[RMDB]
An RNA of 177 nucleotides, treated with DMS and 2A3 and read out base by base.
RNA sequence: GGGAACGACUCGAGUAGAGUCGAAAAGCAGAGGAGGGGAGCUGCUCCUCGGGUCACGACUGGGCGGCGAGAUAAUGCGCUGCGGAAAUCCAGGACGCACGGGAUAGUUCUGGAUGGACUGCUGCGCGACAGACUUACUCUUCGGAGUAAGUCUGUCAAAAGAAACAACAACAACAAC
Reactivity to DMS in 0.01 (KOAc 150mM, MgCl2 10mM, bicine 150mM(pH8.5), 24C), signal-to-noise 4, nucleotides 027 to 126: g020c070a060g010a110g000g010a090g030g000g020g000a120g010c060u010g010c030u000c000c040u000c050g000g000g010u000c150a080c100g020a120c090u020g000g000g000c110g010g000c030g000a070g000a130u020a060a120u010g000c000g000c000u000g010c010g000g010a190a150a020u010c000c000a000g000g010a010c000g010c160a140c160g000g000g030a160u010a110g010u000u000c000u010g020g000a010u000g010g010a300c040u010g020c000u000g000c010g020c000
Reactivity to 2A3 in 0.01 (KOAc 150mM, MgCl2 10mM, bicine 150mM(pH8.5), 24C), signal-to-noise 3, nucleotides 027 to 126: g050c040a030g020a030g040g040a020g000g040g030g030a060g020c050u080g030c010u040c000c010u000c000g020g010g010u100c090a030c100g070a060c070u060g000g030g010c060g010g020c030g020a050g020a060u220a180a110u220g010c000g000c020u030g000c000g000g010a050a070a000u000c000c000a000g000g010a000c010g040c080a050c100g150g060g020a130u120a090g000u000u000c000u000g000g000a000u000g010g070a010c020u060g000c000u020g000c000g000c010